[RMDB]
RNA sequence: GGGAACGACUCGAGUAGAGUCGAAAAGAUAUGGACGUACAGAGCUUUUGACGAGGUCAUGUCGGAAACGACAUGGUCCUCGAUAAGCUCGUACGUCCUAAGUCAAACGGCGGCUUCGGCCGCCGAACUCUGACGAUUAGUUCGCUAAUCGUCAGAGAAAAGAAACAACAACAACAAC
Reactivity to 2A3 in 0.01 (KOAc 150mM, MgCl2 10mM, bicine 150mM(pH8.5), 24C), signal-to-noise 2, nucleotides 027 to 126: g030a000u050a020u100g000g000a020c000g000u030a020c210a260g000a040g030c030u040u220u300u300g300a220c140g000a010g000g000u010c000a000u010g000u010c000g030g000a060a030a040c000g000a010c000a000u010g000g000u100c030c000u000c000g000a010u000a020a000g010c000u020c000g000u010a010c000g000u000c000c000u000a000a000g000u010c020a020a050a080c070g000g030c020g000g000c030u100u090c300g140g000c000c000g010c010c010g000a030a000
Reactivity to DMS in 0.01 (KOAc 150mM, MgCl2 10mM, bicine 150mM(pH8.5), 24C), signal-to-noise 2, nucleotides 027 to 126: g000a060u000a300u000g010g000a020c000g000u000a000c010a180g000a020g000c000u010u010u000u000g000a270c160g010a010g030g030u000c000a000u000g000u010c010g000g000a080a060a130c020g020a010c020a000u000g000g000u000c000c000u010c010g040a040u010a010a010g030c000u000c020g010u000a000c000g020u000c000c010u000a000a020g000u000c070a130a170a290c030g010g020c050g040g000c030u000u000c250g040g000c030c000g000c000c000g000a030a040
An RNA of 177 nucleotides, treated with 2A3 and DMS and read out base by base. DMS adducts were read by reverse transcription with MarathonRT. 2A3 is a SHAPE reagent: it acylates the 2'-hydroxyl of flexible nucleotides of all four kinds. The RNA was probed in 150 mM KOAc, 10 mM MgCl2 and 150 mM bicine (pH 8.5) at 24 C. It was measured as part of the RMDB library TTRDES. For DMS, 1,644 sequencing reads were counted.